[RMDB]
RNA sequence: GGGAACGACUCGAGUAGAGUCGAAAAGCAGGAGGCCGGCUCCUGGCAGAAUCGGCUUCCAGCUCUGGGCACUGGGGUGCGGUGUGGGACCAGCAACAGGCUGCUCCUCUGCCAGGAACCGCCAGAACAGAGUAGCCUAAUUCGUUAGGCUACUCUGAAAAGAAACAACAACAACAAC
Reactivity to DMS in 0.01 (KOAc 150mM, MgCl2 10mM, bicine 150mM(pH8.5), 24C), signal-to-noise 3, nucleotides 027 to 126: g010c080a090g020g020a140g010g020c200c030g090g010c050u000c010c000u010g010g020c050a030g000a140a010u000c020g010g010c030u000u020c010c030a000g000c090u000c050u000g010g010g020c150a200c060u000g010g020g000g030u000g030c050g030g020u000g000u010g010g010g000a060c130c020a030g000c030a180a110c220a130g010g000c000u000g010c240u000c020c020u000c020u010g020c010c020a030g010g000a030a020c010c020g030c010c010a070g020a100a210
Reactivity to 2A3 in 0.01 (KOAc 150mM, MgCl2 10mM, bicine 150mM(pH8.5), 24C), signal-to-noise 3, nucleotides 027 to 126: g040c030a040g010g220a070g120g070c240c130g050g030c010u010c010c000u010g020g030c010a000g030a060a050u050c010g030g010c010u300u120c020c000a000g000c020u040c050u030g040g100g000c080a030c050u010g020g010g000g050u300g250c050g000g010u060g020u130g020g020g010a020c010c000a010g010c020a030a180c000a130g290g050c010u000g010c000u020c000c000u030c000u020g010c000c010a010g000g000a000a000c000c000g020c000c000a020g030a040a010